[RMDB]
RNA sequence: GGGAACGACUCGAGUAGAGUCGAAAAUGGCGCGACACUUUAUUGACAAUAAUGUAGUGUUUGCCAACACGGACGACUACCAGUUGCGCAACUUUCACAAAGGUUUGCCGCUGUUUCGUACAAACUAUAAAAUUAUCAACAGCAAAAAAUUUGUGACUCUCAGAUAUUCGUUCGCGAAUAUCUGAGAAAAAGAAACAACAACAACAAC
Reactivity to 2A3 in 0.01 (KOAc 150mM, MgCl2 10mM, bicine 150mM(pH8.5), 24C), signal-to-noise 2, nucleotides 027 to 156: u030g000g000c000g040c080g020a000c030a020c020u080u140u110a100u100u160g120a130c090a160a130u300a130a040u100g040u070a000g000u040g020u030u040u160g000c000c030a050a030c050a020c060g120g020a000c020g040a030c030u080a080c010c090a020g010u140u080g060c030g030c050a020a030c030u030u100u110c050a040c020a090a030a010g050g030u080u100u060g070c010c030g010c010u010g010u010u030u040c010g000u060a070c070a070a160a040c050u030a080u180a260a160a080a100u240u150a030u130c030a020a150c000a040g000c000a000a070a100a070a160a210u070u070u020g030u020g020a030c000